[RMDB]
Conditions: 150 mM KOAc, 10 mM MgCl2 and 150 mM bicine (pH 8.5), 24 C. The record gives the reactivity of an RNA of 177 nucleotides to 2A3 and DMS. 2A3 adducts were read by reverse transcription with SuperScript II with manganese. The data come from the RNA Mapping Database (RMDB), library OK2TST. For 2A3, 1,512 sequencing reads were counted.
RNA sequence: GGGAACGACUCGAGUAGAGUCGAAAAUUCAGCUGUGCGUGGAAUGGCGCCCAAGACCGCGACACCGGCCUGGUCACACGCCUGUCGCAGCACCUGUUCAUGUCGGGCCGAUCCGACCCGGUUGAGGCCUAGCGAUCGAUUUCGAUCGAUCGCUAGGAAAAGAAACAACAACAACAAC
Reactivity to 2A3 in 0.01 (KOAc 150mM, MgCl2 10mM, bicine 150mM(pH8.5), 24C), signal-to-noise 2, nucleotides 027 to 126: u080u020c020a010g010c020u040g040u140g140c090g100u110g090g000a090a130u130g070g000c070g070c040c010c000a040a040g040a050c050c000g000c060g030a030c030a010c070c050g000g000c000c020u040g000g040u140c070a050c000a020c130g020c010c010u040g060u070c000g000c030a030g080c010a070c000c030u100g080u170u120c060a090u100g060u120c010g000g000g000c000c030g040a060u050c010c070g140a060c000c040c010g000g030u010u070g080a030g000g130
Reactivity to DMS in 0.01 (KOAc 150mM, MgCl2 10mM, bicine 150mM(pH8.5), 24C), signal-to-noise 2, nucleotides 027 to 126: u010u010c090a100g010c040u000g010u000g040c050g040u010g000g010a160a090u000g010g010c090g020c060c020c040a080a100g010a090c080c040g030c080g010a070c110a090c260c070g000g000c010c070u000g000g000u020c170a080c110a020c240g000c020c010u000g010u000c050g010c040a040g000c050a060c070c030u010g010u010u000c110a060u020g030u000c080g020g000g030c000c010g000a110u000c070c030g000a090c040c010c010g000g000u000u000g000a070g010g000